[RMDB]
RNA sequence: GGGAACGACUCGAGUAGAGUCGAAAAGAAAUCAUACAUACAAGAAAUAUACUACAUUAUUUGGUGAUGUUUUCGACCAGCUUGGUGUGGAAUUUGAAGUAGUUAUAAUAAGAAUGGAUCCAAGCACUGUUAAUUCAAGAUUCGUCUUGAAUUAACAAAAAGAAACAACAACAACAAC
Reactivity to DMS in 0.01 (KOAc 150mM, MgCl2 10mM, bicine 150mM(pH8.5), 24C), signal-to-noise 6, nucleotides 027 to 126: g010a050a030a030u000c020a030u000a110c010a050u000a190c050a050a100g010a070a080a060u010a080u010a090c100u000a090c090a110u010u000a100u000u000u000g010g020u010g000a030u000g000u000u000u000u000c020g000a210c020c020a120g020c020u010u000g000g010u000g020u000g010g010a120a030u000u000u000g000a080a150g000u000a040g010u010u010a070u000a050a060u010a090a160g000a040a040u000g000g010a130u000c010c000a010a010g000c020a110c260
Reactivity to 2A3 in 0.01 (KOAc 150mM, MgCl2 10mM, bicine 150mM(pH8.5), 24C), signal-to-noise 5, nucleotides 027 to 126: g010a010a050a010u040c010a010u080a300c010a020u160a140c020a060a030g080a070a130a010u160a020u040a120c050u050a040c030a090u100u090a080u100u110u060g010g010u040g010a030u030g020u000u020u010u020c010g020a030c000c000a000g000c010u010u010g030g010u030g030u070g090g140a140a090u050u010u110g040a130a030g030u090a010g020u130u150a150u060a300a080u070a060a020g020a040a020u030g010g040a000u000c010c000a010a010g000c010a010c040
An RNA of 177 nucleotides, treated with DMS and 2A3 and read out base by base. Source: RMDB library OK2TST, as collected in RNAgym. DMS (dimethyl sulfate) methylates the pairing face of unpaired adenines and cytosines. For 2A3, 4,971 sequencing reads were counted. 2A3 is a SHAPE reagent: it acylates the 2'-hydroxyl of flexible nucleotides of all four kinds. Conditions: 150 mM KOAc, 10 mM MgCl2 and 150 mM bicine (pH 8.5), 24 C.